[RMDB]
Structure probing data (2A3) for a 207-nucleotide construct.
The RNA was probed in 150 mM KOAc, 10 mM MgCl2 and 150 mM bicine (pH 8.5) at 24 C.
Reactivities are given for positions 27 through 156.
RNA sequence: GGGAACGACUCGAGUAGAGUCGAAAAUUAACUUGAGGGAAAUAUCUACUUCUGAUAUGGUAAGAAGGAAGAGUAAAAUUCCCAGCUCUUCAGAGGAGCACUGAAGAAAAACUUAUGAAUAAAUUCAUUUUCAGCAUUUUUUCCUAAAGGCAAAAUACCAUUACUGAUACUUCGGUAUCAGUAAUGGAAAAGAAACAACAACAACAAC
Reactivity to 2A3 in 0.01 (KOAc 150mM, MgCl2 10mM, bicine 150mM(pH8.5), 24C), signal-to-noise 2, nucleotides 027 to 156: u070u010a070a030c040u130u140g040a120g020g000g030a020a100a030u070a010u030c030u080a070c000u040u000c000u020g040a050u040a100u300g130g020u110a110a060g000a010a010g080g020a020a020g000a000g040u060a080a050a090a060u010u000c020c020c000a000g040c020u000c000u060u060c000a010g040a020g090g010a030g010c030a000c020u000g000a030a030g000a120a100a060a000a000c070u230u190a090u160g010a000a010u050a170a060a070u100u050c010a040u020u040u020u040c010a000g020c000a020u000u020u040u020u140u250c010c040u080a050a020a010g040g030c080a020a130a020a000u300a160